[RMDB]
RNA sequence: GGGAACGACUCGAGUAGAGUCGAAAACAUUUCAAAACCGGGCAUAGAAAUACUUGCAAACUGGAUCUCAGAAGCGUUUAAAAACUGCUACUCUAAUACUAUAUAUCUAGUAGAUCGUAGUAUGAUAGAAUUGAUCACCAUUCGUGGUGAUCAAUUCAAAAGAAACAACAACAACAAC
Reactivity to 2A3 in 0.01 (KOAc 150mM, MgCl2 10mM, bicine 150mM(pH8.5), 24C), signal-to-noise 4, nucleotides 027 to 126: c010a030u100u200u160c070a050a050a090a080c030c020g000g020g020c020a060u080a100g150a130a170a030u160a150c040u060u070g010c040a130a080a070c050u040g050g020a050u050c080u020c130a070g030a110a020g020c050g060u020u100u190a060a130a000a010a010c010u050g040c010u010a010c010u000c010u090a050a090u000a050c010u010a010u070a050u010a020u170c040u040a050g080u040a020g060a030u030c010g000u000a000g020u010a030u070g090a050u060a070
Reactivity to DMS in 0.01 (KOAc 150mM, MgCl2 10mM, bicine 150mM(pH8.5), 24C), signal-to-noise 1, nucleotides 027 to 126: c020a050u010u050u000c050a090a060a180a120c040c050g000g000g000c000a050u010a080g000a130a070a140u010a020c040u000u040g000c020a100a050a300c120u000g000g020a110u020c040u000c060a090g020a050a060g000c010g000u000u000u000a050a050a070a080a050c110u000g020c000u000a040c030u000c050u020a060a100u000a000c010u000a050u000a050u090a000u000c080u010a080g000u020a070g000a050u000c130g000u000a000g000u000a000u000g010a100u030a160
The record gives the reactivity of an RNA of 177 nucleotides to 2A3 and DMS.
2A3 adducts were read by reverse transcription with SuperScript II with manganese.
The reactions ran in a buffer of 150 mM KOAc, 10 mM MgCl2 and 150 mM bicine (pH 8.5), at 24 C.
Values cover nucleotides 27 to 126.